[RMDB]
Source information: Structure probing data (DMS and 2A3) for a 170-nucleotide construct. For 2A3 the reverse transcriptase was SuperScript II with manganese. Conditions: 150 mM KOAc, 10 mM MgCl2 and 150 mM bicine (pH 8.5), 24 C. It was measured as part of the RMDB library 15KLIB.
RNA sequence: GGGAACGACUCGAGUAGAGUCGAAAAGGAAAAAGAAAAGAAGGCAAGGAAUUGGUAGAAAAGAGCGAGCCUCCCGAUACGAGUUUGCCAGGACCUAUCAAGUUUGGAGUCAUCCGGCCCGUAGGGGUAAUGCUCGGGUUCGCCCGAGCAAAAAGAAACAACAACAACAAC
Reactivity to DMS in 0.01 (KOAc 150mM, MgCl2 10mM, bicine 150mM(pH8.5), 24C), signal-to-noise 4, nucleotides 027 to 129: g000g150a030a010a060a090a060g020a070a060a040a060g000a050a210g040g010c190a040a110g000g000a020a090u160u000g010g050u110a090g010a110a040a070a060g000a020g040c120g010a070g000c040c030u020c000c040c010g000a100u160a080c160g000a050g020u030u000u000g030c070c070a000g080g000a080c110c010u030a130u020c130a050a050g030u020u000u060g000g000a030g030u000c140a090u020c100c010g000g060c020c000c010g020u060a070g000g010g000g010u030a080a030
Reactivity to 2A3 in 0.01 (KOAc 150mM, MgCl2 10mM, bicine 150mM(pH8.5), 24C), signal-to-noise 1, nucleotides 027 to 129: g050g000a060a060a000a000a020g150a000a090a010a000g040a000a050g030g000c060a010a030g020g050a070a050u030u080g080g070u130a010g090a020a080a020a000g020a000g000c030g000a020g040c000c040u000c000c000c000g050a060u090a050c000g000a030g080u000u140u120g030c000c000a000g000g000a000c000c000u050a050u050c050a000a090g020u000u130u100g020g000a000g010u040c020a020u070c000c030g000g000c000c000c000g000u000a010g010g010g010g000u040a060a020